The data come from the RNA Mapping Database (RMDB), library OK2TRN.
This 177-nucleotide RNA was probed chemically with DMS.
The DMS profile rests on 887 reads.
[RMDB]
RNA sequence: GGGAACGACUCGAGUAGAGUCGAAAACGUGCGUACUGGGCCGCCGGCACAAUGUUCUACCCAGCCGUCUCAGAGGGCGCGGUUCGACGACGAUCAGCCAGCAGGUCAGCGGGGUCCUCCUAGCUAGAUGAUACUGGGACUUCGGUCCCAGUAUCAUAAAAGAAACAACAACAACAAC
Reactivity to DMS in 0.01 (KOAc 150mM, MgCl2 10mM, bicine 150mM(pH8.5), 24C), signal-to-noise 1, nucleotides 027 to 126: c040g020u000g020c010g040u010a070c040u000g000g050g000c100c190g040c080c070g040g000c030a080c070a030a120u010g000u000u000c130u020a090c110c030c050a160g020c030c050g000u010c040u000c050a060g020a120g000g000g030c120g000c070g000g000u000u010c070g000a080c030g020a110c070g030a100u020c080a080g020c000c040a090g020c040a050g010g000u010c020a090g000c030g020g020g000g000u000c020c030u010c060c010u000a070g010c090u010a130g000